[RMDB]
RNA sequence: GGGAACGACUCGAGUAGAGUCGAAAAAGUUAGGUUCGCUAUGGUGCAACUCUUUAAGGCAAUAACGAACUAAUUCUAAGCAAGUAAUGGAGAAAUGCCAGGGUAACUAUCUAGCCAUAAUAGUGCUGUAAGUGACUUAGAUUCGUCUAAGUCACAACCUUCAACUUCGUUUCGACGAAGUUGAAGGAAAAGAAACAACAACAACAAC
Reactivity to DMS in 0.01 (KOAc 150mM, MgCl2 10mM, bicine 150mM(pH8.5), 24C), signal-to-noise 1, nucleotides 027 to 156: a040g020u000u000a070g000g020u010u000c060g060c030u010a000u000g000g010u000g000c000a060a150c080u000c020u010u010u020a040a100g000g030c020a100a030u000a070a020c030g000a040a080c040u000a030a070u000u000c030u010a080a170g020c020a070a100g020u000a040a080u000g030g010a120g020a100a100a030u020g020c000c040a090g010g010g010u010a050a060c000u000a040u010c020u010a080g000c000c030a000u000a040a050u000a040g030u000g010c010u000g000u010a030a120g030u000g000a010c000u000u000a020g010a040u000u000c300g040u000c000u000a020a010g020u000c020a020c010a020a040
Reactivity to 2A3 in 0.01 (KOAc 150mM, MgCl2 10mM, bicine 150mM(pH8.5), 24C), signal-to-noise 4, nucleotides 027 to 156: a000g040u030u030a030g000g060u070u040c040g010c050u030a010u050g120g100u070g070c040a160a200c070u050c040u090u240u180a120a070g070g000c020a060a060u040a070a020c040g030a000a000c010u010a000a030u100u060c080u140a000a120g020c030a100a040g020u130a020a120u120g050g020a090g030a050a070a030u090g020c000c040a030g010g000g000u010a030a020c000u000a060u040c010u060a010g000c020c010a020u040a100a030u080a160g090u070g040c100u040g060u130a100a050g000u000g000a000c000u000u010a000g000a000u000u020c070g020u000c110u000a010a000g000u000c000a000c000a010a000